Source: RMDB library OK1LIB, as collected in RNAgym. Structure probing data (2A3 and DMS) for a 177-nucleotide construct. For 2A3 the reverse transcriptase was SuperScript II with manganese.

RNA sequence: GGGAACGACUCGAGUAGAGUCGAAAAUACGCUGGUAGCAGCAAGUAGCAGCUCGAUCCGCAGAUGAGCGGAAUAUACAAAUGACAAUGGAUCUCGAUAGAGCUGCUACAAUCGAGACCAUUAGAGAAUGGAGUACUACCUUCGGGUAGUACUCCAUAAAAGAAACAACAACAACAAC
Reactivity to 2A3 in 0.01 (KOAc 150mM, MgCl2 10mM, bicine 150mM(pH8.5), 24C), signal-to-noise 3, nucleotides 027 to 126: u180a070c070g000c040u010g050g130u220a140g260c030a000g030c020a000a050g000u020a000g000c020a000g000c000u000c000g050a040u000c010c010g070c000a040g050a300u290g160a140g000c000g000g020a010a020u160a000u000a000c180a030a130a000u150g250a040c040a000a000u000g000g090a280u030c000u000c000g000a000u090a050g020a000g020c000u000g000c000u000a000c000a000a000u020c000g000a000g000a000c000c000a000u000u080a080g060a000g040a090
Reactivity to DMS in 0.01 (KOAc 150mM, MgCl2 10mM, bicine 150mM(pH8.5), 24C), signal-to-noise 1, nucleotides 027 to 126: u090a040c200g020c000u020g000g000u080a160g000c000a000g020c040a140a290g000u000a000g040c000a000g000c000u000c000g050a260u040c090c000g000c000a150g000a170u030g000a110g000c000g030g120a020a100u050a090u100a150c090a050a060a010u000g010a060c040a000a050u000g000g120a130u000c000u000c080g000a070u000a130g010a000g000c000u000g000c000u000a000c000a050a040u000c000g000a000g000a050c010c000a000u000u030a040g040a090g000a110